Structure probing data (2A3 and DMS) for a 177-nucleotide construct. For DMS, 64,927 sequencing reads were counted. Conditions: 150 mM KOAc, 10 mM MgCl2 and 150 mM bicine (pH 8.5), 24 C.
RNA sequence: GGGAACGACUCGAGUAGAGUCGAAAAUCACGUGGGAGGUGACAUCUGUCGUAGCUUUGCACAAUACGAGGCUGUCAUAGUUCUCUUGCAAGGAACUUUCAACAGGUCACUACUCGUGCUGUGUGAAGAUAGUAAUCUCAUUCGUGAGGUUACUAUCAAAAGAAACAACAACAACAAC
Reactivity to 2A3 in 0.01 (KOAc 150mM, MgCl2 10mM, bicine 150mM(pH8.5), 24C), signal-to-noise 9, nucleotides 027 to 126: u070c000a000c010g010u060g010g030g010a080g000g010u010g010a010c010a110u080c040u040g030u030c030g030u020a020g010c010u010u010u020g000c010a030c010a070a080u130a110c070g010a000g050g010c010u020g070u170c050a050u070a060g010u210u070c030u000c000u020u090g020c020a030a020g020g000a060a120c000u040u170u060c040a030a010c000a010g010g030u070c030a010c070u080a020c000u010c000g030u010g010c040u040g020u000g020u020g050a050a050
Reactivity to DMS in 0.01 (KOAc 150mM, MgCl2 10mM, bicine 150mM(pH8.5), 24C), signal-to-noise 9, nucleotides 027 to 126: u020c010a030c020g020u020g000g010g010a270g020g000u010g000a030c030a070u030c030u010g020u010c050g030u010a030g000c020u000u000u000g000c000a050c300a080a090u020a080c170g000a020g000g010c000u000g000u020c240a110u060a010g010u010u020c000u010c010u010u020g010c110a060a060g000g000a030a060c050u010u010u000c100a080a010c010a010g010g010u010c050a050c080u020a150c010u000c000g010u000g010c100u010g010u000g000u010g000a090a060